[RMDB]
Overview:
Conditions: 150 mM KOAc, 10 mM MgCl2 and 150 mM bicine (pH 8.5), 24 C. Structure probing data (2A3 and DMS) for a 207-nucleotide construct. The DMS profile rests on 2,678 reads. The 2A3 profile rests on 961 reads. 2A3 adducts were read by reverse transcription with SuperScript II with manganese. Reactivities are rounded to 0.1 and cut off at 0 and 3.

RNA sequence: GGGAACGACUCGAGUAGAGUCGAAAAAAUUGAGAUUUAAUACACUUGCAAAUUAUGGCAUGGAAAUGGAUAUAAAACCUAGCAUGCCUCAGCAGCUAUGUGCUCCCACAAUCCCCGUGUGGAAAUAGAAUUGGGCUGAUGUAUCUCAGUGAGUGCAUGUCUUAGCUACAUUCGUGUAGCUAAGACAAAAAGAAACAACAACAACAAC
Reactivity to 2A3 in 0.01 (KOAc 150mM, MgCl2 10mM, bicine 150mM(pH8.5), 24C), signal-to-noise 2, nucleotides 027 to 156: a020a010u090u070g030a020g020a020u000u040u220a060a090u170a080c040a000c070u080u110g020c030a010a000a150u260u020a140u280g000g000c020a000u010g030g050a080a170a110u180g040g000a090u190a000u080a300a140a060a000c010c010u020a030g130c000a000u010g000c000c000u010c000a010g000c000a000g040c030u120a050u190g020u110g000c010u010c020c010c000a000c020a010a070u030c000c010c000c010g000u000g010u040g050g080a020a060a030u100a020g100a110a090u130u220g000g020g000c000u010g000a000u020g050u120a040u010c060u000c040a040g030u030g060a010g050u110g030c030a050
Reactivity to DMS in 0.01 (KOAc 150mM, MgCl2 10mM, bicine 150mM(pH8.5), 24C), signal-to-noise 2, nucleotides 027 to 156: a060a130u000u010g000a160g010a110u000u000u000a070a110u000a070c050a010c030u000u000g020c040a080a050a070u010u000a080u010g020g000c000a060u000g000g000a300a080a100u010g030g020a110u010a220u000a100a040a080a120c010c050u000a210g020c000a030u010g000c000c000u000c040a120g000c050a030g040c030u000a080u000g010u010g010c060u000c010c010c000a070c100a040a150u010c060c010c000c090g000u010g030u000g030g000a010a010a170u010a080g000a070a230u010u010g020g010g040c020u000g020a030u010g000u010a140u000c070u010c030a100g010u000g010a050g040u010g060c060a110